[RMDB]
RNA sequence: GGGAACGACUCGAGUAGAGUCGAAAAGGAGUCCGAGGCUGUAGUGAGCCAUGAUUGCACCACUGUACCCUAGCUUGGGCAACAAAGCAAGACCCUGCCUCAAAAGAAAAAAGAAAGAAAGAAAGAACAAUGGCCUUCAUUUCGAUGAAGGCCAUUGAAAAGAAACAACAACAACAAC
Reactivity to DMS in 0.01 (KOAc 150mM, MgCl2 10mM, bicine 150mM(pH8.5), 24C), signal-to-noise 4, nucleotides 027 to 126: g000g030a160g020u000c020c080g010a150g030g010c010u000g000u020a110g010u000g000a110g000c020c030a140u010g020a100u030u020g000c000a060c010c010a050c100u000g000u000a130c050c050c070u000a140g000c070u000u000g000g010g000c100a040a060c070a060a090a050g010c090a060a070g000a100c030c020c000u000g000c040c010u010c080a080a090a090a080g010a050a020a030a070a080a090g010a050a050a060g000a080a060a090g010a110a080a080g010a100a100
Reactivity to 2A3 in 0.01 (KOAc 150mM, MgCl2 10mM, bicine 150mM(pH8.5), 24C), signal-to-noise 3, nucleotides 027 to 126: g040g030a020g110u000c010c030g030a070g000g000c000u010g040u150a070g060u050g180a010g010c000c000a020u080g100a140u020u090g010c080a110c050c040a030c020u040g030u150a110c000c050c000u020a030g040c010u070u100g040g000g020c000a040a020c010a040a150a000g100c010a030a020g040a040c000c000c020u020g000c000c000u040c020a030a050a010a000g120a010a110a010a010a000a000g150a040a060a020g060a000a090a000g080a040a150a040g020a020a000

The record gives the reactivity of an RNA of 177 nucleotides to DMS and 2A3. Values cover nucleotides 27 to 126. Conditions: 150 mM KOAc, 10 mM MgCl2 and 150 mM bicine (pH 8.5), 24 C.